The record gives the reactivity of an RNA of 207 nucleotides to 2A3. For 2A3 the reverse transcriptase was SuperScript II with manganese. The 2A3 profile rests on 1,800 reads.

RNA sequence: GGGAACGACUCGAGUAGAGUCGAAAAGCAUCGACGACGGUCCUGCCAUGAGACCGUAACGAGGACAUGUCGCCUCGAAUGGCGUCGGGGAGCCGGCAGCUUACCCCAAGGAUGAGUGCCUAAUGCCUAUACCCGAUUCGCUUCGGCGAAUCGGGAACCUCAAGAUGUGAUUCGUCACAUCUUGAGGAAAAGAAACAACAACAACAAC
Reactivity to 2A3 in 0.01 (KOAc 150mM, MgCl2 10mM, bicine 150mM(pH8.5), 24C), signal-to-noise 3, nucleotides 027 to 156: g090c010a020u050c030g040a040c020g010a000c000g030g000u010c020c030u060g190c000c070a200u180g020a100g010a110c010c000g010u020a010a050c010g010a010g000g040a030c060a190u240g000u150c140g020c010c000u020c030g030a070a090u110g070g000c040g000u050c040g000g000g010g000a010g040c020c080g040g000c030a020g020c020u060u150a250c000c000c010c050a050a030g060g010a060u060g040a010g090u080g000c000c030u060a070a050u080g020c000c020u050a060u080a140c020c010c000g000a000u020u010c010g000c000u030u030c080g070g000c000g000a000a000u000c020g020g010g000a000a000
It was measured as part of the RMDB library M2RFPK. The reactions ran in a buffer of 150 mM KOAc, 10 mM MgCl2 and 150 mM bicine (pH 8.5), at 24 C.